The record gives the reactivity of an RNA of 177 nucleotides to DMS and 2A3. DMS adducts were read by reverse transcription with MarathonRT. DMS (dimethyl sulfate) methylates the pairing face of unpaired adenines and cytosines. The DMS profile rests on 6,614 reads. The 2A3 profile rests on 3,110 reads. Reactivities are rounded to 0.1 and cut off at 0 and 3.
[RMDB]
RNA sequence: GGGAACGACUCGAGUAGAGUCGAAAAUGGUUGCGGCCCGCAGUAAGUGCUUGACCCCUUAUGCUUUAACACCAGGAGCUGCAGUUCCGUGGACGCUGGGGAUACUCUGCUGCGCCCCGCGGGCGCAAGCAGUAAUUCCCUUCGGGGAAUUACUGCUAAAAGAAACAACAACAACAAC
Reactivity to DMS in 0.01 (KOAc 150mM, MgCl2 10mM, bicine 150mM(pH8.5), 24C), signal-to-noise 6, nucleotides 027 to 126: u000g010g020u000u000g010c020g010g010c040c060c020g020c020a050g000u000a060a070g010u000g010c150u010u010g010a150c050c010c010c050u000u010a070u020g010c030u000u010u000a080a130c140a080c030c090a160g010g000a030g020c010u010g030c180a150g010u000u000c010c000g020u000g000g010a110c190g010c040u000g020g010g000g000a140u010a080c090u010c040u000g010c060u000g010c040g010c030c090c020c060g020c090g010g010g020c040g020c090a040
Reactivity to 2A3 in 0.01 (KOAc 150mM, MgCl2 10mM, bicine 150mM(pH8.5), 24C), signal-to-noise 3, nucleotides 027 to 126: u110g030g040u060u080g040c030g110g180c010c000c010g000c010a000g030u130a260a050g040u010g030c110u120u140g120a160c030c000c000c000u110u180a110u300g010c040u060u060u230a140a050c060a030c080c040a050g040g000a020g030c020u220g060c120a070g030u050u000c010c020g030u040g000g040a040c060g000c040u040g000g000g000g010a000u040a050c030u090c040u060g070c040u030g000c030g030c010c010c000c000g050c030g000g030g000c020g020c010a010